[RMDB]
RNA sequence: GGGAACGACUCGAGUAGAGUCGAAAAAGCCGGGGUCCGUCGCUGGCCGGGUGUGGUCGAGGACUUCAUGAAGUACGUGGAGUGGGACACCCAGAACGGCAAUGAUCUGGUGUUCGGGUUCCUGCCGCCAUGGGGAAGCAUUCGUGCUUCCCCAUGGAAAAGAAACAACAACAACAAC
Reactivity to DMS in 0.01 (KOAc 150mM, MgCl2 10mM, bicine 150mM(pH8.5), 24C), signal-to-noise 2, nucleotides 027 to 126: a110g020c040c050g020g020g000g020u010c020c010g010u000c100g030c120u010g000g030c000c030g010g000g020u020g010u020g010g010u010c040g010a300g010g020a040c020u000u010c030a050u000g010a140a120g020u010a130c050g040u010g000g010a150g020u010g000g000g000a200c200a020c020c020c010a090g000a040a120c020g010g030c050a090a090u010g000a100u000c130u010g010g010u010g010u000u000c030g000g000g010u000u000c020c010u000g010c050c110g020
Reactivity to 2A3 in 0.01 (KOAc 150mM, MgCl2 10mM, bicine 150mM(pH8.5), 24C), signal-to-noise 1, nucleotides 027 to 126: a000g040c050c060g000g020g000g000u030c020c000g030u030c050g050c060u080g060g000c000c010g020g070g050u090g070u080g010g070u050c060g000a060g080g060a030c000u000u010c010a060u060g110a150a040g080u280a040c030g020u020g000g050a030g030u040g000g030g010a040c060a010c020c000c040a000g100a110a010c000g020g000c000a020a170u200g070a100u110c120u140g160g010u090g190u000u010c020g010g000g020u000u000c020c010u000g090c010c010g090